[RMDB]
RNA sequence: GGGAACGACUCGAGUAGAGUCGAAAAUUAGGUAUAACGAUGCUUCGUGACUUUGCCGUUUUCAGUCACUCGCUCGGCUGUAGGUCCCAGGCAUAUGCCUGUGGGAACGACUCUAGCGAUUGCUCGACUAUAUAGUCCAAUUCGUUGGACUAUAUAGAAAAGAAACAACAACAACAAC
Reactivity to DMS in 0.01 (KOAc 150mM, MgCl2 10mM, bicine 150mM(pH8.5), 24C), signal-to-noise 9, nucleotides 027 to 126: u000u000a040g010g010u000a030u000a050a060c030g010a030u000g010c070u000u000c060g010u000g000a040c060u000u000u000g010c020c010g000u000u000u000u000c030a050g000u000c030a030c030u000c170g010c020u000c050g000g000c050u000g000u000a030g010g010u000c000c010c010a020g000g010c010a250u010a100u010g010c000c000u000g000u010g020g000g010a080a180c020g010a030c010u000c010u000a030g010c020g000a060u000u000g010c040u000c020g010a300
Reactivity to 2A3 in 0.01 (KOAc 150mM, MgCl2 10mM, bicine 150mM(pH8.5), 24C), signal-to-noise 9, nucleotides 027 to 126: u080u030a040g040g030u090a090u040a230a050c040g020a030u160g060c050u080u080c060g030u030g050a050c030u100u090u110g040c020c020g070u050u010u030u090c030a030g020u040c020a010c030u020c020g000c010u020c030g040g000c060u070g030u080a040g020g050u040c000c000c010a000g010g000c030a140u210a090u300g000c010c000u040g060u260g010g020g000a080a030c010g020a010c010u000c010u040a020g030c010g050a060u020u080g030c030u030c030g020a030